[RMDB]
RNA sequence: GGGAACGACUCGAGUAGAGUCGAAAAGGCGCUUUGAGAUGGCGUGGAGGAUGGGAGAAUGGCAGGAAGCUGCAGAGCUGCAGCCUCCUUUUCCUGAUGCUGGGGACAGCGCACCCUUUCACCAGGCGUUCAAGGUAGUGUUCGCACUACCUUGAACAAAAGAAACAACAACAACAAC
Reactivity to DMS in 0.01 (KOAc 150mM, MgCl2 10mM, bicine 150mM(pH8.5), 24C), signal-to-noise 2, nucleotides 027 to 126: g010g020c020g010c020u000u000u030g000a190g010a080u010g020g010c060g010u010g010g000a080g010g000a050u010g010g000g000a050g010a090a070u010g000g000c300a070g010g000a040a060g010c010u010g000c040a030g020a110g000c240u010g000c020a000g000c030c000u010c010c000u000u000u000u020c010c000u000g010a090u010g030c050u010g000g000g010g000a190c170a050g010c040g000c040a170c020c010c030u000u010u000c040a070c040c040a070g000g030c300
Reactivity to 2A3 in 0.01 (KOAc 150mM, MgCl2 10mM, bicine 150mM(pH8.5), 24C), signal-to-noise 2, nucleotides 027 to 126: g040g000c000g020c020u080u160u130g130a150g000a080u050g060g010c070g010u050g060g070a030g020g010a040u070g010g040g040a020g040a140a210u140g060g000c040a020g020g050a060a010g010c010u040g010c040a040g010a070g300c170u020g000c020a000g000c000c010u030c000c040u100u040u050u020c000c000u030g020a030u070g000c010u040g000g000g040g000a030c000a000g000c000g000c010a080c010c000c060u020u050u040c100a120c070c020a030g030g090c070